[RMDB]
RNA sequence: GGGAACGACUCGAGUAGAGUCGAAAAUGGAUGGCGCUCAAGCGUGCUACCCAUACCUCGCCGUCGGGGUAGAAACGAAGCCCCGACGAGUAGGCAGGCGUGGAGGUUUGUGACGAAGCCUUGGGAGACGCAUUCAUGUAUUCGUACAUGAAUGCGUAAAAGAAACAACAACAACAAC
Reactivity to 2A3 in 0.01 (KOAc 150mM, MgCl2 10mM, bicine 150mM(pH8.5), 24C), signal-to-noise 4, nucleotides 027 to 126: u080g020g010a020u020g040g030c010g000c020u050c090a080a020g020c040g040u090g090c020u030a040c000c000c010a000u030a030c000c010u030c080g020c040c010g010u000c000g010g000g030g000u060a070g190a100a210a020c130g030a100a030g010c000c000c000c000g000a000c000g000a010g010u050a020g040g000c050a010g030g010c040g010u040g010g030a040g000g060u040u090u070g080u070g020a020c040g030a050a010g010c020c000u030u050g050g020g020a120g010
Reactivity to DMS in 0.01 (KOAc 150mM, MgCl2 10mM, bicine 150mM(pH8.5), 24C), signal-to-noise 5, nucleotides 027 to 126: u020g000g010a060u010g000g010c030g000c000u000c080a070a130g010c150g030u010g010c000u000a030c030c010c010a020u010a270c020c000u000c080g030c060c030g010u000c000g020g000g000g000u010a060g000a050a090a140c300g000a140a240g010c010c000c000c000g000a000c000g000a060g020u010a070g000g010c080a040g000g000c060g020u010g000g020a070g020g010u010u000u010g000u010g000a080c090g000a090a080g000c020c000u000u000g000g000g010a150g000